[RMDB]
RNA sequence: GGGAACGACUCGAGUAGAGUCGAAAACUGGCCUGUGUGGAAGUACGAGAGUACUUCACUCUCUACGGGAGUAGAGACACACAGAUCGUGGAGCGAUGUCUUGGAACUACUCCCGUAGUUCACGUAUGACUCUCGUCAUACCAAGACGCCAGCCACGCGAUGCUUGUUAGUUCGCUAACAAGCAUCGAAAAGAAACAACAACAACAAC
Reactivity to DMS in 0.01 (KOAc 150mM, MgCl2 10mM, bicine 150mM(pH8.5), 24C), signal-to-noise 1, nucleotides 027 to 156: c020u010g000g000c010c060u010g020u000g040u000g000g030a070a120g030u010a000c000g030a200g010a140g020u000a090c060u000u000c080a150c070u010c060u000c000u000a030c010g060g010g000a130g010u000a000g000a110g000a300c000a010c010a050c010a060g000a030u000c030g050u030g000g020a250g020c020g040a040u000g020u000c010u010u000g060g030a110a190c030u000a020c030u000c080c070c030g040u000a000g020u000u000c070a100c120g000u000a030u000g000a080c000u010c060u000c040g020u000c030a060u000a080c000c020a000a020g020a050c000g000c010c010a020g040c000c030a060c070g030
Reactivity to 2A3 in 0.01 (KOAc 150mM, MgCl2 10mM, bicine 150mM(pH8.5), 24C), signal-to-noise 4, nucleotides 027 to 156: c010u000g000g000c010c000u000g000u000g010u010g060g020a090a030g010u090a010c000g010a000g000a010g040u130a230c000u120u120c010a030c020u100c010u000c000u000a000c000g010g000g010a010g000u010a010g000a000g020a000c000a000c000a000c000a020g010a000u010c010g020u100g140g120a120g110c020g020a020u020g000u000c000u000u010g000g010a030a050c000u000a000c000u010c010c000c000g000u000a000g010u080u140c120a090c090g090u080a050u110g010a010c000u010c010u010c090g010u000c000a010u020a050c000c000a000a000g000a000c000g000c000c010a000g010c010c000a040c010g050
Conditions: 150 mM KOAc, 10 mM MgCl2 and 150 mM bicine (pH 8.5), 24 C. An RNA of 207 nucleotides, treated with DMS and 2A3 and read out base by base. Values cover nucleotides 27 to 156. It was measured as part of the RMDB library OK3TST.